[RMDB]
The data come from the RNA Mapping Database (RMDB), library OK2TST.
Structure probing data (2A3 and DMS) for a 177-nucleotide construct.
The RNA was probed in 150 mM KOAc, 10 mM MgCl2 and 150 mM bicine (pH 8.5) at 24 C.
For 2A3, 1,205 sequencing reads were counted.
Reactivities are given for positions 27 through 126.
RNA sequence: GGGAACGACUCGAGUAGAGUCGAAAAGAAGAAUGUAUAUUCUGUUGAUUUGGGGUGGAGAGUUCUGUAGAUGCCUGUUAGGUCCACUUGGUGAAGAGCUGAGUUCAAGUCCUGGAUAUCCUUGUUAGGUUAUAUUUGGUUUCGACCAAAUAUAACCAAAAGAAACAACAACAACAAC
Reactivity to 2A3 in 0.01 (KOAc 150mM, MgCl2 10mM, bicine 150mM(pH8.5), 24C), signal-to-noise 2, nucleotides 027 to 126: g090a020a020g060a020a040u090g060u160a130u060a020u240u020c010u010g070u110u040g090a220u090u030u120g010g000g020g020u030g000g090a060g020a010g050u090u090c020u100g060u040a050g010a140u110g030c020c000u010g100u090u080a050g010g050u000c060c000a060c040u040u050g020g020u070g010a070a090g030a000g090c070u030g010a000g000u020u030c040a040a000g000u000c000c030u000g010g000a040u020a070u150c000c000u060u090g090u130u160a030
Reactivity to DMS in 0.01 (KOAc 150mM, MgCl2 10mM, bicine 150mM(pH8.5), 24C), signal-to-noise 5, nucleotides 027 to 126: g000a110a050g000a050a020u000g010u020a080u010a040u000u000c010u010g010u000u000g010a130u000u000u000g020g010g000g020u010g010g010a110g020a110g000u000u000c040u000g010u000a080g010a090u000g010c030c020u000g010u010u010a070g010g020u000c060c060a070c050u000u000g010g010u000g000a090a080g000a140g000c040u000g010a080g010u000u000c100a060a100g000u000c030c010u000g010g000a110u000a070u000c040c030u000u010g010u010u000a110